[RMDB]
RNA sequence: GGGAACGACUCGAGUAGAGUCGAAAAGGGGACGUUCUUGGAUUCGACAGGGGUCCCCCGAGCUUAUUAAGCGUGUCGGAGGGUUGGCUCCGUCAUCAACACAUUUCGGUUAAAUAUAACUGACAAAUCAAACAAUAAUUUCGCAGUAGCUGCGUAAGUAAAUAUCCCUGUUCGCAGGGAUAUUUACAAAAGAAACAACAACAACAAC
Reactivity to 2A3 in 0.01 (KOAc 150mM, MgCl2 10mM, bicine 150mM(pH8.5), 24C), signal-to-noise 2, nucleotides 027 to 156: g000g010g010g010a000c060g150u170u050c020u110u090g130g070a210u160u230c100g070a030c020a020g010g010g000g000u000c000c000c000c000c000g000a010g000c010u030u080a030u200u170a300a020g000c020g030u140g110u070c000g030g000a000g010g010g010u210u010g030g080c000u000c020c000g060u010c010a000u020c000a030a000c020a000c000a000u040u090u070c040g020g040u030u020a040a300a060u220a130u070a080a040c010u010g060a010c080a030a100a020u210c060a040a160a040c030a000a140u090a080a190u060u160u150c000g000c030a030g050u250a030g050c090u060g000c010g010u020a050a020